[RMDB]
RNA sequence: GGGAACGACUCGAGUAGAGUCGAAAAGUGAAAAGUACCCCGGGAGGGGAGUGAAAUAGUACCUGAAACCGUGUGCCUACAAGCCGUGGGAGCGUCGGACAUCAGCUUGCUGGUGUCUCGUGACUGCGCCCUCCUCAAUAUUCGUAUUGAGGAGGGCAAAAGAAACAACAACAACAAC
Reactivity to DMS in 0.01 (KOAc 150mM, MgCl2 10mM, bicine 150mM(pH8.5), 24C), signal-to-noise 2, nucleotides 027 to 126: g010u000g000a060a060a140a180g010u010a110c050c010c040c000g030g010g010a300g010g000g000g000a030g000u000g010a030a090a180u010a080g000u010a080c030c000u020g020a120a040a110c070c020g000u000g010u010g010c000c000u000a070c190a100a090g010c100c050g000u000g000g010g020a150g000c010g010u000c080g000g010a000c000a010u000c010a000g000c010u000u010g010c000u000g010g020u000g000u000c000u010c050g000u010g010a120c030u000g030c140
Reactivity to 2A3 in 0.01 (KOAc 150mM, MgCl2 10mM, bicine 150mM(pH8.5), 24C), signal-to-noise 1, nucleotides 027 to 126: g090u040g030a090a000a020a070g060u100a090c040c040c000c010g010g030g000a080g000g000g000g050a030g020u050g080a080a000a040u180a030g070u010a040c030c000u030g020a070a040a020c030c030g020u060g020u150g030c000c030u070a090c050a100a050g010c070c030g000u020g000g010g050a020g020c030g050u070c040g000g010a000c000a010u010c000a000g010c030u100u210g020c000u040g000g020u020g000u040c010u000c020g050u050g000a000c030u070g060c040
Structure probing data (DMS and 2A3) for a 177-nucleotide construct. DMS adducts were read by reverse transcription with MarathonRT. Conditions: 150 mM KOAc, 10 mM MgCl2 and 150 mM bicine (pH 8.5), 24 C. For 2A3, 1,356 sequencing reads were counted. Source: RMDB library OK2TRN, as collected in RNAgym.